Chemical mapping of a 177-nucleotide RNA with DMS and 2A3. Reactivities are rounded to 0.1 and cut off at 0 and 3. The data come from the RNA Mapping Database (RMDB), libraries RFM100 and RFMREP. The RNA was probed in 150 mM KOAc, 10 mM MgCl2 and 150 mM bicine (pH 8.5) at 24 C. 2A3 is a SHAPE reagent: it acylates the 2'-hydroxyl of flexible nucleotides of all four kinds. DMS adducts were read by reverse transcription with MarathonRT.
[RMDB]
RNA sequence: GGGAACGACUCGAGUAGAGUCGAAAAGAAGUAUCAGAGGAUGAAACCUUAUAACAAUCUUAGGACACCUUCUGACACAGUGCAAUCACACUGUGAAUGAGAAGGCUUUUCUUUCUGAUGAUGCUAAGAAAUACUCUAGAUUCGUCUAGAGUAUUUCAAAAGAAACAACAACAACAAC
Reactivity to DMS in 0.01 (KOAc 150mM, MgCl2 10mM, bicine 150mM(pH8.5), 24C), signal-to-noise 9, nucleotides 027 to 126: g010a160a040g020u000a010u000c010a020g000a300g000g000a020u000g000a020a040a140c040c010u010u000a060u020a130a130c270a100a090u030c160u010u010a020g010g010a260c280a210c010c000u000u000c000u000g010a190c000a010c000a010g000u000g010c070a110a110u040c300a190c000a000c010u000g000u000g000a060a070u010g010a020g000a020a010g000g000c120u010u000u000u000c010u010u010u010c010u000g000a240u000g010a030u000g000c010u000a090a120
Reactivity to 2A3 in 0.01 (KOAc 150mM, MgCl2 10mM, bicine 150mM(pH8.5), 24C), signal-to-noise 9, nucleotides 027 to 126: g060a020a010g010u010a000u000c000a000g010a010g030g000a010u020g020a020a020a030c010c010u090u100a110u100a170a100c150a120a120u120c100u120u110a010g000g010a010c010a010c040c000u000u000c000u030g060a010c000a000c000a000g000u020g000c050a090a220u140c030a050c000a000c030u000g000u010g050a050a090u110g020a010g000a010a000g000g000c000u040u040u020u000c010u050u270u000c010u010g030a060u000g000a000u010g000c010u040a040a040